[RMDB]
RNA sequence: GGGAACGACUCGAGUAGAGUCGAAAAUUGCCUGUGAAAUGCUAUUUUAGAAUGUUCUAUGAAAACCCUAUUACAUUCCAAGGACAGCUUUUGUAGUUAAAAACAAAAUAAAAAUCAUAUGAUAUGGAUCACAGUAAACAAUGACAUUUCCAGUAUACUCACGGUGAUUAUUCGUAAUCACCGUGAGAAAAGAAACAACAACAACAAC
Reactivity to 2A3 in 0.01 (KOAc 150mM, MgCl2 10mM, bicine 150mM(pH8.5), 24C), signal-to-noise 1, nucleotides 027 to 156: u000u000g010c000c000u010g000u010g030a040a020a040u100g000c010u060a060u120u090u000u070a040g010a080a040u050g000u010u000c020u020a040u070g070a070a100a120a120c100c020c000u080a040u080u040a040c000a040u000u130c060c010a060a030g040g000a040c030a010g040c000u040u040u030u070g010u000a040g000u080u100a060a150a030a020a000c010a000a200a000a020u210a090a080a100a030a030u000c030a000u070a060u230g050a040u040a010u200g100g000a000u070c000a000c000a010g030u070a080a070a000c020a010a240u140g070a010c000a090u030u070u000c000c000a030g040u110a060u130a090